[RMDB]
Source: RMDB library OK2TRN, as collected in RNAgym. Structure probing data (DMS and 2A3) for a 177-nucleotide construct. The reactions ran in a buffer of 150 mM KOAc, 10 mM MgCl2 and 150 mM bicine (pH 8.5), at 24 C.

RNA sequence: GGGAACGACUCGAGUAGAGUCGAAAAGAUCGCGAAAAACGCGCCGACGGCAACGACGUCCGCCGCGCUCACGGCUGCAACGCGCCGAGCAGCGCGCCCUCGAGGCCGUAAUACGCGGCGCGCUGCAUACUACUGGCAGGUUCGCCUGCCAGUAGUAAAAAGAAACAACAACAACAAC
Reactivity to DMS in 0.01 (KOAc 150mM, MgCl2 10mM, bicine 150mM(pH8.5), 24C), signal-to-noise 3, nucleotides 027 to 126: g000a110u010c090g020c020g000a070a080a070a060a080c020g030c000g010c040c060g000a060c020g000g020c060a030a080c070g000a080c110g000u000c070c080g040c100c020g020c020g030c010u020c080a260c040g000g000c030u020g030c050a090a080c250g000c060g000c030c000g000a090g020c080a060g010c000g030c050g010c030c030c050u000c060g000a120g010g010c000c000g000u000a130a110u000a060c130g030c120g000g000c000g020c010g020c020u000g000c050a120
Reactivity to 2A3 in 0.01 (KOAc 150mM, MgCl2 10mM, bicine 150mM(pH8.5), 24C), signal-to-noise 1, nucleotides 027 to 126: g040a080u160c070g030c030g110a180a060a000a000a020c030g000c000g020c000c000g040a040c010g000g000c010a060a030c060g090a000c080g040u050c030c080g040c060c000g000c000g020c000u040c010a050c020g060g000c060u100g010c050a100a100c140g010c040g000c050c000g000a030g030c050a000g040c030g010c020g040c000c000c000u050c020g020a100g010g000c000c010g010u040a060a000u170a040c090g010c020g050g010c000g020c010g000c030u020g000c000a040
Values cover nucleotides 27 to 126. For DMS the reverse transcriptase was MarathonRT. 2A3 adducts were read by reverse transcription with SuperScript II with manganese.